[RMDB]
RNA sequence: GGGAACGACUCGAGUAGAGUCGAAAAGUUUGAGCGGUCGAACCCAGGGGGAGUGUGAUCCAGGUACCGCCGUAGAAACUGGAUUACGACGUCUACCCGGGAUUCAAACCCGGUCCCCCUCAGAGGUGACUCUGAGUGAAAGGUCUGCGCUUAGCGCCAAUGCAUCUAUCUUCGGAUAGAUGCAUUGAAAAGAAACAACAACAACAAC
Reactivity to 2A3 in 0.01 (KOAc 150mM, MgCl2 10mM, bicine 150mM(pH8.5), 24C), signal-to-noise 3, nucleotides 027 to 156: g030u070u100u150g060a070g030c060g000g080u090c040g010a080a040c000c000c080a170g000g000g000g000g010a050g010u040g000u020g010a010u000c000c000a010g000g020u060a080c030c070g050c050c020g030u090a080g100a110a260a010c000u010g010g010a000u010u010a020c100g080a000c050g240u020c040u170a300c030c010c000g000g010g010a030u110u070c050a020a020a060c000c010c000g000g040u040c000c000c000c000c000u010c000a010g010a000g000g020u100g030a050c000u000c000u000g000a040g020u080g060a170a040a010g070g040u080c100u080g010c010g000c060u170u150a050g000c000g000c000
Reactivity to DMS in 0.01 (KOAc 150mM, MgCl2 10mM, bicine 150mM(pH8.5), 24C), signal-to-noise 2, nucleotides 027 to 156: g000u000u000u010g020a110g010c040g030g020u000c080g010a060a150c000c010c010a160g010g010g010g010g010a170g030u020g030u000g010a050u010c010c010a040g010g010u010a130c090c040g000c040c180g000u010a110g010a100a080a180c050u000g000g010a140u000u000a050c000g010a070c030g000u010c060u000a110c050c010c000g000g000g010a050u010u000c130a080a070a110c000c010c030g000g020u000c030c010c010c040c020u000c000a000g030a030g040g030u020g000a300c020u000c000u010g000a010g000u000g010a090a130a120g000g000u000c040u010g000c020g050c040u000u010a070g020c030g030c150